[RMDB]
RNA sequence: GGGAACGACUCGAGUAGAGUCGAAAACGCGCCGCGGCUCGUGUCGCUGUCGAUUUCGGAGUCGCGCUCCGACGAGGCGGACACCAUCGAUAUCGUGCUCGACGACUCGAAAAACGAUCUGGACAUUCCGAAGCGCGGCGCGACGAUCAAGGCGUCGCGGCAGCCAGUCGUUCGCGACUGGCUGCCGAAAAGAAACAACAACAACAAC
Reactivity to 2A3 in 0.01 (KOAc 150mM, MgCl2 10mM, bicine 150mM(pH8.5), 24C), signal-to-noise 1, nucleotides 027 to 156: c020g000c000g000c040c020g010c000g110g070c010u010c010g020u040g000u000c000g040c160u020g110u050c000g010a050u120u000u000c070g130g030a030g020u020c010g020c020g010c090u010c030c000g070a050c020g000a020g050g070c110g110g020a050c000a030c070c040a200u040c050g060a020u030a040u200c050g020u090g020c050u070c010g140a160c020g010a030c070u010c060g020a010a010a000a000a020c000g000a010u030c180u050g010g010a030c020a090u150u000c060c090g030a070a000g000c000g000c000g000g050c000g000c000g000a000c000g010a050u100c100a100a020g180g000c060g050u060c030g000